Record summary
This 177-nucleotide RNA was probed chemically with DMS and 2A3. The reactions ran in a buffer of 150 mM KOAc, 10 mM MgCl2 and 150 mM bicine (pH 8.5), at 24 C. For 2A3, 1,313 sequencing reads were counted. For DMS the reverse transcriptase was MarathonRT. The DMS profile rests on 979 reads.
[RMDB]
RNA sequence: GGGAACGACUCGAGUAGAGUCGAAAAUAAAUGAGGGUACAGCACACUCAGACUGUACGCUAUCUGAGUGUGUCAACUUCAAAGUCCAACGACACACACAAGGCGUUGGAACAAGAGUGUGAGAAAAUCUACGGACGAUAUUCGUAUCGUCCGUAGAAAAAGAAACAACAACAACAAC
Reactivity to DMS in 0.01 (KOAc 150mM, MgCl2 10mM, bicine 150mM(pH8.5), 24C), signal-to-noise 2, nucleotides 027 to 126: u040a100a050a050u050g010a030g010g010g000u000a060c260a220g000c000a000c000a010c000u010c030a040g020a040c150u010g010u000a080c170g010c030u000a130u000c000u000g000a040g030u000g000u010g000u000c080a110a130c050u000u000c030a010a060a130g060u000c010c010a000a030c050g010a060c050a100c070a030c190a130c140a070a120g010g010c000g000u000u000g000g000a030a080c120a060a130g000a030g010u000g030u000g000a080g010a050a020a120a070
Reactivity to 2A3 in 0.01 (KOAc 150mM, MgCl2 10mM, bicine 150mM(pH8.5), 24C), signal-to-noise 1, nucleotides 027 to 126: u200a010a090a100u070g000a050g060g030g000u110a090c110a040g000c000a000c000a010c000u010c000a000g000a080c030u060g040u190a070c180g010c070u040a040u030c020u000g000a010g000u020g000u000g000u000c000a000a000c010u030u010c010a050a000a040g070u000c000c010a000a000c000g100a050c000a000c010a000c000a020c020a260a030g060g000c010g000u030u000g000g030a000a000c020a030a060g070a030g010u180g050u020g040a070g090a040a110a000a030